RNA sequence: GGGAACGACUCGAGUAGAGUCGAAAAGUGGAUUUCAGACCUGUACCCAUCACACUUGUACUUCUUAGCAUGUGGUACAGGGAUGCUCAGCAGUGCAAGUGUGACAGGUAUGGUGUUUAUAAGUUAGCAAACCGUAUAAGUUCGCUUAUACGGUUUGAAAAGAAACAACAACAACAAC
Reactivity to DMS in 0.01 (KOAc 150mM, MgCl2 10mM, bicine 150mM(pH8.5), 24C), signal-to-noise 7, nucleotides 027 to 126: g010u000g010g000a120u010u000u010c160a160g010a020c010c000u000g010u000a010c000c000c020a210u000c010a010c010a010c000u000u000g010u000a010c010u000u000c010u000u000a020g010c000a010u000g020u010g020g010u010a110c200a120g000g000g010a010u000g000c000u000c060a020g020c070a020g010u000g000c010a010a000g000u000g010u000g010a000c050a070g010g010u000a010u000g010g000u010g010u000u000u000a100u000a050a070g010u000u010a120g010
Reactivity to 2A3 in 0.01 (KOAc 150mM, MgCl2 10mM, bicine 150mM(pH8.5), 24C), signal-to-noise 4, nucleotides 027 to 126: g080u070g030g080a150u090u090u110c070a050g020a030c010c010u010g010u000a010c010c010c010a000u010c000a000c010a000c010u020u000g010u020a000c000u000u010c000u000u020a000g010c010a000u040g110u140g300g100u220a080c020a040g070g080g010a000u000g000c000u010c010a000g010c010a000g000u000g000c000a010a010g000u000g000u000g000a000c000a000g020g000u000a000u000g010g020u120g030u070u030u000a160u030a080a100g120u030u110a030g020

An RNA of 177 nucleotides, treated with DMS and 2A3 and read out base by base. Values cover nucleotides 27 to 126. The data come from the RNA Mapping Database (RMDB), library RFMREP. The 2A3 profile rests on 4,278 reads.